[RMDB]
RNA sequence: GGGAACGACUCGAGUAGAGUCGAAAAGGUUGACUAAGGAGGAAGACAUGGGAUUGACACGAUCCAUCAACGUCCUAGUGGUCGGAGCAGCCUUCGUAUUCGUCGUGACGAUGCUUUUCAUCUGACGAUCCUGGACGCUCUUCGGAGCGUCCAGGAUAAAAGAAACAACAACAACAAC
Reactivity to DMS in 0.01 (KOAc 150mM, MgCl2 10mM, bicine 150mM(pH8.5), 24C), signal-to-noise 1, nucleotides 027 to 126: g000g070u000u000g000a000c000u010a090a000g000g000a040g000g000a130a240g000a050c060a110u050g000g000g000a150u020u000g000a170c220a000c140g000a020u000c000c010a120u000c220a190a300c130g000u000c000c000u000a060g000u060g010g000u000c000g000g030a110g000c090a040g040c040c030u030u010c120g000u000a060u000u000c020g040u010c000g000u000g000a000c090g000a000u000g000c100u000u000u000u000c080a130u000c010u000g000a130c030g000
Reactivity to 2A3 in 0.01 (KOAc 150mM, MgCl2 10mM, bicine 150mM(pH8.5), 24C), signal-to-noise 1, nucleotides 027 to 126: g020g000u010u000g010a080c110u110a000a300g000g010a000g000g070a200a020g040a000c050a170u080g050g000g000a050u000u000g170a070c100a100c110g000a000u000c000c000a000u000c000a000a010c000g260u000c000c000u000a050g100u050g020g040u100c120g000g000a090g000c070a000g050c000c000u010u050c080g010u080a100u160u130c000g000u000c000g000u000g000a000c000g010a000u130g040c030u000u020u160u060c090a080u000c000u060g010a100c000g040